[RMDB]
Source: RMDB library OK1LIB, as collected in RNAgym. The record gives the reactivity of an RNA of 177 nucleotides to 2A3. The RNA was probed in 150 mM KOAc, 10 mM MgCl2 and 150 mM bicine (pH 8.5) at 24 C.
RNA sequence: GGGAACGACUCGAGUAGAGUCGAAAAGCGCUUCCUCUUGCUGGAGCUUCGCAACGCACCACAACAAACGGGCCACACGAUUCUCGUCAAAUUGUUGUAAAUGCUCUUUUGCACAGUAAAAAAGUAAGCCUAUUUGACCGUUCGCGGUCAAAUAGGCAAAAGAAACAACAACAACAAC
Reactivity to 2A3 in 0.01 (KOAc 150mM, MgCl2 10mM, bicine 150mM(pH8.5), 24C), signal-to-noise 1, nucleotides 027 to 126: g090c020g000c070u030u030c020c000u020c020u000u020g000c050u090g080g000a050g000c000u030u140c090g000c090a060a000c020g010c080a050c020c010a000c060a060a050c000a030a010a030c000g020g000g000c000c000a050c000a010c070g020a000u110u000c010u000c000g080u030c000a000a000a210u160u050g010u020u010g000u020a000a100a100u140g000c020u000c000u000u030u080u030g060c050a020c040a090g130u260a000a050a000a000a000a140g170u240a180a000